[RMDB]
RNA sequence: GGGAACGACUCGAGUAGAGUCGAAAAGAGUCAUAAUGCCCAUACUAUUUUUGUACACUUGGCUUGGUUUCCAGUGGAGUUACAAUGCUCAUCCUAUUUUUGCACACUUGUGUUUAGUUUGCAGUGGACUUAUACUGUCCGUACUAUUUUAGCACACUAGGUGUGCCUGUUUCGACAGGCACACCUAAAAAGAAACAACAACAACAAC
Reactivity to 2A3 in 0.01 (KOAc 150mM, MgCl2 10mM, bicine 150mM(pH8.5), 24C), signal-to-noise 1, nucleotides 027 to 156: g090a020g010u120c020a000u020a100a130u290g080c010c120c000a020u020a070c010u080a100u070u240u010u060u150g070u080a000c000a000c000u040u080g000g000c000u010u010g030g080u040u060u090c020c000a070g010u040g020g080a110g000u010u100a040c080a130a040u260g010c000u000c010a100u010c020c010u130a220u140u110u090u130u070g030c000a030c000a020c000u030u120g000u010g000u130u040u090a020g010u000u010u010g060c040a010g000u050g050g070a000c000u070u110a160u050a190c200u140g000u000c000c000g010u050a040c020u000a080u040u110u040u080a000g020c000a000c000a000c160
Structure probing data (2A3) for a 207-nucleotide construct. For 2A3, 404 sequencing reads were counted. The reactions ran in a buffer of 150 mM KOAc, 10 mM MgCl2 and 150 mM bicine (pH 8.5), at 24 C. It was measured as part of the RMDB library OK3TST.